Chemical mapping of a 177-nucleotide RNA with DMS.
RNA sequence: GGGAACGACUCGAGUAGAGUCGAAAAGAUAUGGACGCACUACCCACCGCUCCGAGGGACAUCGAUCAUAGAAGCUCGGAAACGAGCUUCUAUGGGAGUCCCGAGGAGCGAGGUGCGUCCUAAGUCACAUGGUACAGCAGUUCGCUGCUGUACCAUGAAAAGAAACAACAACAACAAC
Reactivity to DMS in 0.01 (KOAc 150mM, MgCl2 10mM, bicine 150mM(pH8.5), 24C), signal-to-noise 1, nucleotides 027 to 126: g000a050u020a210u000g000g000a040c000g040c000a020c000u000a050c040c030c010a300c070c020g020c000u000c000c000g000a300g000g000g000a050c000a300u000c210g000a080u010c000a020u000a000g020a020a020g020c000u000c000g000g000a060a080a200c010g010a020g060c000u000u030c000u000a000u000g000g000g010a100g030u000c000c000c000g010a150g000g000a020g060c030g010a020g000g010u000g000c010g000u000c000c000u000a000a030g030u000c040a190